[RMDB]
RNA sequence: GGGAACGACUCGAGUAGAGUCGAAAACUCAAUCAUUAGACAAUACUAUAUAGCAAGAGUGGAGAAGGACUUCACCCUUCCUGUAGGAAGACUACAUGGUGGAGUUCAAACCACACAGAGAAAAAUCGUCAAUGCAUGAUUUCGAUCAUGCAUUGACAAAAGAAACAACAACAACAAC
Reactivity to DMS in 0.01 (KOAc 150mM, MgCl2 10mM, bicine 150mM(pH8.5), 24C), signal-to-noise 1, nucleotides 027 to 126: c010u050c030a100a070u000c080a000u040u000a040g000a250c030a030a160u000a220c050u040a090u040a160u000a050g000c090a060a140g000a050g000u000g010g010a050g040a230a140g030g000a030c030u000u000c000a000c000c040c130u000u000c010c090u030g100u000a100g000g000a050a030g010a210c120u000a010c160a090u010g030g050u000g000g000a060g000u040u000c010a000a170a290c040c010a040c050a120c130a080g000a230g030a000a010a070a010a150u030c260
Reactivity to 2A3 in 0.01 (KOAc 150mM, MgCl2 10mM, bicine 150mM(pH8.5), 24C), signal-to-noise 2, nucleotides 027 to 126: c010u020c020a020a060u070c030a070u140u090a050g030a100c020a060a090u040a150c070u060a050u050a050u130a300g130c050a050a020g060a020g120u020g030g000a110g040a150a100g000g010a000c020u000u000c000a010c020c020c000u050u040c010c030u090g130u090a160g020g030a030a040g030a050c070u060a040c120a100u220g000g000u010g020g010a000g000u000u000c020a000a000a020c000c010a010c000a010c020a000g130a030g020a050a090a030a000a060u150c100